[RMDB]
RNA sequence: GGGAACGACUCGAGUAGAGUCGAAAAGAUAUGGAAUCACCAAACGGUCCUGAAUGCUCGAUAAGUCCGGGUCGGAAACGACCCAGGACUUUUGACGAGCGCGGACCGUUUGGUGAUUCCUAAGUCACCUUGUCUAUAACUUCGGUUAUAGACAAGGAAAAGAAACAACAACAACAAC
Reactivity to DMS in 0.01 (KOAc 150mM, MgCl2 10mM, bicine 150mM(pH8.5), 24C), signal-to-noise 1, nucleotides 027 to 126: g010a100u010a300u000g000g000a020a010u000c000a010c020c000a000a030a010c000g010g000u000c010c020u010g040a120a090u010g000c020u010c000g020a180u020a020a020g020u010c010c020g010g000g030u030c000g010g000a120a070a250c000g000a020c010c010c000a000g040g000a000c010u000u000u010u020g010a240c100g000a000g020c020g030c090g000g000a000c000c020g000u000u010u010g010g020u000g020a000u000u000c000c000u010a020a090g000u020c030a300